[RMDB]
RNA sequence: GGGAACGACUCGAGUAGAGUCGAAAAGAAAGAAAAAGAAAUCAUGAAAUGCGGUCAACCGUCAGAAUUUCGGUCGGAAAUACGACAUUAAGCAGAAAGCCGGCCGCAAUGUCGUUUAAGAAGAAAACCAUACCCUACGUUUCGACGUAGGGUAUGGAAAAGAAACAACAACAACAAC
Reactivity to 2A3 in 0.01 (KOAc 150mM, MgCl2 10mM, bicine 150mM(pH8.5), 24C), signal-to-noise 3, nucleotides 027 to 126: g020a050a100a010g080a050a090a000a050a000g150a020a150a050u180c080a090u120g070a070a090a020u090g020c040g000g050u190c030a160a140c030c000g090u060c020a000g020a140a080u020u040u050c040g000g030u030c000g020g060a020a180a120u180a000c090g080a000c010a000u180u170a100a000g080c080a030g170a120a020a000g030c000c000g000g000c010c000g000c000a000a080u040g040u040c060g010u020u060u140a090a030g070a090a000g050a010a070a000a000
Reactivity to DMS in 0.01 (KOAc 150mM, MgCl2 10mM, bicine 150mM(pH8.5), 24C), signal-to-noise 2, nucleotides 027 to 126: g020a120a030a070g000a030a070a020a080a020g000a050a080a000u000c120a060u100g000a070a090a090u050g030c060g010g000u020c100a060a070c160c020g050u030c050a120g010a070a090u000u000u000c000g060g040u000c110g070g000a130a030a030u000a080c160g070a000c030a040u020u000a220a170g020c000a050g000a110a070a100g000c030c110g000g000c000c080g000c110a000a030u000g010u000c060g030u000u000u030a060a060g000a050a070g010a180a010a060a080